[RMDB]
RNA sequence: GGGAACGACUCGAGUAGAGUCGAAAAGUAUAUGACUUCGGUCAUAUACAAAGGCCGAUCGAAGGCCAACAGCGACUUCAACGCCAAGCGAUCAAGAAGAAAAAAGAUGCACCUUCGGGUGCAUCAACACUUUAUCAACGUUCGCGUUGAUAAAGUGAAAAGAAACAACAACAACAAC
Reactivity to DMS in 0.01 (KOAc 150mM, MgCl2 10mM, bicine 150mM(pH8.5), 24C), signal-to-noise 2, nucleotides 027 to 126: g000u000a000u000a000u000g010a010c000u000u020c170g020g000u000c000a000u000a000u000a010c000a040a130a140g000g000c000c030g020a110u020c140g010a170a190g010g000c000c020a050a110c250a060g010c080g010a060c060u010u000c070a080a110c050g040c020c070a060a090g020c060g000a090u000c120a070a060g010a030a050g030a010a060a060a030a090a090g000a000u000g010c000a000c000c000u000u010c200g020g030g010u000g000c000a000u000c000a040a160
Reactivity to 2A3 in 0.01 (KOAc 150mM, MgCl2 10mM, bicine 150mM(pH8.5), 24C), signal-to-noise 3, nucleotides 027 to 126: g000u000a020u010a000u000g010a000c000u010u080c210g050g000u020c000a000u010a000u000a010c000a010a070a010g000g010c030c030g020a080u170c110g100a240a030g000g010c000c000a000a000c010a000g030c010g060a040c020u050u030c060a100a040c030g000c050c070a120a030g070c020g090a070u100c070a070a080g060a060a020g060a070a230a020a000a000a020g000a000u000g010c010a000c010c000u040u080c160g120g000g000u000g010c000a010u000c010a000a000
Chemical mapping of a 177-nucleotide RNA with DMS and 2A3. High 2A3 reactivity points to a flexible backbone, as in loops and unpaired stretches. For 2A3 the reverse transcriptase was SuperScript II with manganese. The reactions ran in a buffer of 150 mM KOAc, 10 mM MgCl2 and 150 mM bicine (pH 8.5), at 24 C. The data come from the RNA Mapping Database (RMDB), library M2PK50.